[RMDB]
RNA sequence: GGGAACGACUCGAGUAGAGUCGAAAAUAAAACACCGCAACGCAGGAAAAGCGCAUGCUUAUCGGGACAACAACCCAACGCGGCAGGUGUACCAUGUACCAUUGGGCAAAACGUUUACUGGCGCGUUCACAUUGCAAAAAUUCGUUUUUGCAAUGUGAAAAGAAACAACAACAACAAC
Reactivity to 2A3 in 0.01 (KOAc 150mM, MgCl2 10mM, bicine 150mM(pH8.5), 24C), signal-to-noise 6, nucleotides 027 to 126: u170a000a060a020a010c060a030c010c010g020c040a070a050c030g010c020a030g040g190a070a090a040a020g040c060g010c090a080u150g000c010u070u070a060u170c040g020g000g040a020c040a140a020c020a040a060c120c000c000a000a010c020g000c000g050g000c030a030g000g020u060g010u050a140c010c000a030u060g030u080a150c060c060a120u050u070g020g000g000c050a050a070a050a030c060g030u050u120u080a050c030u030g080g010c000g000c000g010u020u020
Reactivity to DMS in 0.01 (KOAc 150mM, MgCl2 10mM, bicine 150mM(pH8.5), 24C), signal-to-noise 3, nucleotides 027 to 126: u010a090a040a100a080c110a110c040c000g050c010a070a100c090g000c020a070g010g000a050a090a100a060g020c010g030c100a040u040g000c030u010u010a060u020c060g010g000g010a060c080a060a050c270a070a110c000c030c030a100a060c020g010c030g000g000c050a050g020g020u000g000u000a100c010c030a040u000g020u000a110c130c060a050u000u000g000g010g010c070a060a060a070a050c130g010u000u020u000a100c020u000g000g030c010g010c010g000u000u000
The record gives the reactivity of an RNA of 177 nucleotides to 2A3 and DMS. Source: RMDB libraries RFM100 and RFMREP, as collected in RNAgym. For DMS the reverse transcriptase was MarathonRT. For 2A3 the reverse transcriptase was SuperScript II with manganese. The reactions ran in a buffer of 150 mM KOAc, 10 mM MgCl2 and 150 mM bicine (pH 8.5), at 24 C.